This 207-nucleotide RNA was probed chemically with DMS and 2A3. For 2A3, 4,032 sequencing reads were counted. The data come from the RNA Mapping Database (RMDB), library M2RFPK.
[RMDB]
RNA sequence: GGGAACGACUCGAGUAGAGUCGAAAAGGUCAUCCUUCACAGGAUCGUGUGGAAGUCCCGCUCGGGGCGGAAGCAUUAAAACCAUUCGAGCUAGUCAAUGCGUGGCGUGUCUCUCCGCAGCGUGUUGUGUAUGAGAGUGGAUUCGUCCACUCUCAAACUGCAAUAAAUAAUUCGUUAUUUAUUGCAGAAAAGAAACAACAACAACAAC
Reactivity to DMS in 0.01 (KOAc 150mM, MgCl2 10mM, bicine 150mM(pH8.5), 24C), signal-to-noise 3, nucleotides 027 to 156: g030g020u000c060a090u000c000c000u000u020c190a130c150a180g000g030a040u000c090g050u000g050u000g000g020a300a250g000u000c000c020c010g000c190u000c190g020g010g010g010c020g010g010a300a240g000c030a080u000u000a070a070a110a100c010c020a150u000u000c070g000a110g000c040u000a150g010u000c060a030a070u000g020c020g000u010g020g010c030g020u010g030u010c100u000c040u010c080c030g010c030a050g010c030g000u000g010u000u000g000u040g010u000a130u000g010a030g010a030g040u000g010g000a060u000u020c290g010u000c010c000a010c000u010c010u000c000a000a020a120
Reactivity to 2A3 in 0.01 (KOAc 150mM, MgCl2 10mM, bicine 150mM(pH8.5), 24C), signal-to-noise 5, nucleotides 027 to 156: g070g030u080c030a040u050c040c010u140u180c090a050c040a060g050g030a060u060c070g000u000g000u010g020g020a020a020g010u030c010c010c020g040c150u220c210g000g000g010g010c030g000g000a010a000g000c010a000u030u160a020a050a020a050c020c010a030u070u110c060g030a040g070c070u140a050g190u120c040a060a040u090g020c020g040u030g020g000c030g020u080g060u030c020u000c010u030c070c030g030c040a040g050c030g030u030g000u000u020g000u020g020u040a100u150g010a000g000a000g010u000g000g000a010u010u040c130g060u020c020c000a000c000u000c000u000c000a000a000a000